Source: RMDB library OK2TST, as collected in RNAgym. An RNA of 177 nucleotides, treated with 2A3 and DMS and read out base by base. The 2A3 profile rests on 1,047 reads. The reactions ran in a buffer of 150 mM KOAc, 10 mM MgCl2 and 150 mM bicine (pH 8.5), at 24 C. DMS adducts were read by reverse transcription with MarathonRT.

RNA sequence: GGGAACGACUCGAGUAGAGUCGAAAAUGAACAUGGGUGAGAUCAAUGGUAAAGAACGUGUUUGCUCAACCCAGCCCUACAAUCGUGGAUGGGGAACUGGAUGCUUCAAGUGGGGAAUCGGGUUUGAGGCCAUUAAUACGUUCGCGUAUUAAUGGCCAAAAGAAACAACAACAACAAC
Reactivity to 2A3 in 0.01 (KOAc 150mM, MgCl2 10mM, bicine 150mM(pH8.5), 24C), signal-to-noise 1, nucleotides 027 to 126: u070g030a100a000c040a110u040g010g080g000u030g050a080g000a070u130c070a030a110u100g120g020u200a120a120a060g100a080a010c030g040u070g030u050u000u110g050c070u030c010a010a060c000c030c000a000g010c000c030c000u030a050c060a110a150u160c080g140u160g050g060a030u090g040g000g000g020a000a000c040u040g040g050a010u070g060c070u010u030c090a180a060g040u050g000g110g000g000a030a130u100c130g000g010g000u040u010u030g000a000
Reactivity to DMS in 0.01 (KOAc 150mM, MgCl2 10mM, bicine 150mM(pH8.5), 24C), signal-to-noise 2, nucleotides 027 to 126: u010g000a100a100c050a110u010g000g000g000u020g010a050g000a100u040c070a080a070u020g000g000u010a090a160a090g010a060a060c060g020u000g010u000u000u000g000c010u000c020a050a070c040c010c000a150g050c000c010c000u020a050c050a070a060u000c160g020u010g010g010a220u020g000g000g030g010a050a100c110u000g000g000a190u020g010c070u010u010c080a080a100g040u000g030g020g060g000a060a100u010c190g020g010g000u010u000u000g000a110